The record gives the reactivity of an RNA of 177 nucleotides to DMS and 2A3. DMS adducts were read by reverse transcription with MarathonRT. It was measured as part of the RMDB library OK2TRN.
RNA sequence: GGGAACGACUCGAGUAGAGUCGAAAAGCUUAUACCAAGUGAAGAUCCAGUGAUGGAAUCCAAGGAAUCAGAACUGACACAAGAAGAGAUUGAUCACAUUGCAAGGAUCCAGAGUCUUGCAGAACAACAGUGCACUAGGAUUCGUCCUAGUGCACUGAAAAGAAACAACAACAACAAC
Reactivity to DMS in 0.01 (KOAc 150mM, MgCl2 10mM, bicine 150mM(pH8.5), 24C), signal-to-noise 2, nucleotides 027 to 126: g030c050u000u000a120u000a180c140c040a080a070g040u000g000a140a240g010a180u000c040c000a070g010u030g020a100u000g000g000a040a040u000c090c060a030a100g020g010a100a070u000c050a050g000a220a120c080u000g000a090c080a060c140a020a060g010a150a050g000a160g000a040u000u000g010a070u010c100a040c050a120u000u000g000c050a020a060g000g010a070u000c050c080a100g000a130g020u000c020u000u000g010c000a070g030a130a050c180a090a120
Reactivity to 2A3 in 0.01 (KOAc 150mM, MgCl2 10mM, bicine 150mM(pH8.5), 24C), signal-to-noise 1, nucleotides 027 to 126: g020c040u170u050a070u130a210c000c000a090a040g020u030g050a050a020g020a140u000c000c010a000g000u000g050a070u010g000g060a060a020u000c020c000a020a000g100g020a090a050u080c010a030g020a170a080c080u030g090a040c040a010c010a170a020g080a130a020g120a030g010a080u060u090g000a000u070c000a020c000a060u080u040g000c020a080a100g010g000a020u020c030c060a020g000a000g200u000c020u000u030g030c010a040g060a110a010c040a030a010

Reactivities are given for positions 27 through 126. 2A3 adducts were read by reverse transcription with SuperScript II with manganese. For 2A3, 1,102 sequencing reads were counted. The DMS profile rests on 1,112 reads. The RNA was probed in 150 mM KOAc, 10 mM MgCl2 and 150 mM bicine (pH 8.5) at 24 C.